RNA sequence: GGGAACGACUCGAGUAGAGUCGAAAAUCGAUUAAGAUAUUACUGGUCGACAUCAGCACGACGGCAGAUAGACGGGUAAAUAAACCGCAUGCGACCAUCAUGCUUAAUGCCGUUGCGAUGCCAGCGAUGAAAAUUGCUCGCUGAUUGCCGGUAUGCAACGCCGAGCACAAUUCGUUGUGCUCGGCGUAAAAGAAACAACAACAACAAC
Reactivity to 2A3 in 0.01 (KOAc 150mM, MgCl2 10mM, bicine 150mM(pH8.5), 24C), signal-to-noise 1, nucleotides 027 to 156: u010c010g020a000u080u080a160a000g030a090u050a000u250u000a060c000u070g000g030u140c100g090a100c020a120u000c010a030g080c000a000c030g110a000c010g070g020c010a000g000a140u150a000g110a060c110g040g030g030u140a100a170a120u300a250a050a040c010c000g000c000a010u020g030c010g030a060c080c130a060u300c030a050u030g020c000u150u120a100a030u120g000c000c010g000u000u020g000c050g000a000u020g020c000c000a000g070c000g010a000u180g050a120a000a120a000u280u200g060c130u000c000g000c000u000g000a090u000u070g000c000c000g010g050u030a040u180g000c000a000

Conditions: 150 mM KOAc, 10 mM MgCl2 and 150 mM bicine (pH 8.5), 24 C. Chemical mapping of a 207-nucleotide RNA with 2A3. For 2A3, 381 sequencing reads were counted. Reactivities are rounded to 0.1 and cut off at 0 and 3.